The data come from the RNA Mapping Database (RMDB), library TTRINS. This 177-nucleotide RNA was probed chemically with DMS and 2A3. In probing experiments dimethyl sulfate is read out at A N1 and C N3, which are open when not base-paired.
[RMDB]
RNA sequence: GGGAACGACUCGAGUAGAGUCGAAAAGAUAUGGAUUCCCUAGUAGCUGACGCACAGGAGGUGAAGCUUCGGAAACGAAGCUUCACUCCCCACCCUGUGAACUACGUCCGAAAGGGAAUCCUAAGUCGCUAACUUACUACUUCGGUAGUAAGUUAGCAAAAGAAACAACAACAACAAC
Reactivity to DMS in 0.01 (KOAc 150mM, MgCl2 10mM, bicine 150mM(pH8.5), 24C), signal-to-noise 2, nucleotides 027 to 126: g000a060u000a140u010g000g010a020u000u000c010c000c000u000a100g000u000a150g020c300u010g000a010c030g020c000a020c010a000g010g000a160g030g020u000g000a020a010g010c020u030u000c010g010g000a050a030a140c020g030a000a020g010c010u000u000c000a000c040u000c020c020c020c040a300c130c000c010u000g000u000g000a040a040c100u020a300c020g000u000c010c020g000a150a220a110g010g000g000a000a010u000c000c000u000a020a090g010u020c040
Reactivity to 2A3 in 0.01 (KOAc 150mM, MgCl2 10mM, bicine 150mM(pH8.5), 24C), signal-to-noise 1, nucleotides 027 to 126: g030a010u100a050u160g020g010a020u010u010c020c010c000u000a050g070u040a000g010c290u190g010a000c000g030c030a000c000a000g000g040a070g050g000u000g020a020a030g000c030u030u020c020g040g070a070a030a000c000g000a060a000g010c070u030u010c010a010c000u020c010c000c000c000a020c010c000c010u030g020u010g040a070a040c130u220a050c080g020u020c030c040g090a160a070a030g000g000g040a000a000u030c010c000u000a020a010g050u010c070
The 2A3 profile rests on 3,902 reads. The RNA was probed in 150 mM KOAc, 10 mM MgCl2 and 150 mM bicine (pH 8.5) at 24 C.